Conditions: 150 mM KOAc, 10 mM MgCl2 and 150 mM bicine (pH 8.5), 24 C. An RNA of 177 nucleotides, treated with 2A3 and DMS and read out base by base. For DMS, 1,329 sequencing reads were counted. Source: RMDB library RFM100, as collected in RNAgym. For DMS the reverse transcriptase was MarathonRT. 2A3 is a SHAPE reagent: it acylates the 2'-hydroxyl of flexible nucleotides of all four kinds.
[RMDB]
RNA sequence: GGGAACGACUCGAGUAGAGUCGAAAAGCCUUAAACUAAUGAGUAAGGAAAAUACCGCACCGGUUGACACCGGUGUUAUGGCGUGAACCGCGUUCACGUCGGCUUCCAAUUUCUGGCGGGCUACAGGUGCGAUACCUUUGUUCGCAAAGGUAUCGCAAAAAGAAACAACAACAACAAC
Reactivity to 2A3 in 0.01 (KOAc 150mM, MgCl2 10mM, bicine 150mM(pH8.5), 24C), signal-to-noise 2, nucleotides 027 to 126: g000c000c000u000u080a160a220a090c020u180a120a090u200g050a010g020u020a000a070g030g050a000a000a060a080u100a110c020c010g010c030a000c010c000g050g020u000u090g050a000c060a010c080c000g000g000u050g000u000u000a020u080g000g000c000g030u000g000a000a000c120c180g170c220g070u020u050c000a000c000g000u000c030g000g020c010u000u000c020c000a060a100u050u150u000c000u030g030g000c050g000g000g000c020u050a020c000a090g100g020
Reactivity to DMS in 0.01 (KOAc 150mM, MgCl2 10mM, bicine 150mM(pH8.5), 24C), signal-to-noise 1, nucleotides 027 to 126: g030c000c000u030u000a130a260a100c060u000a020a010u000g020a070g010u030a050a100g000g000a000a050a040a110u010a100c050c070g000c000a030c000c000g000g010u010u000g010a090c220a090c040c000g000g000u000g000u000u010a000u030g000g010c080g040u040g000a010a020c050c100g000c300g030u000u000c000a000c000g000u000c050g000g000c240u020u000c030c050a090a050u030u000u020c040u000g000g030c000g030g060g010c030u000a060c250a040g000g000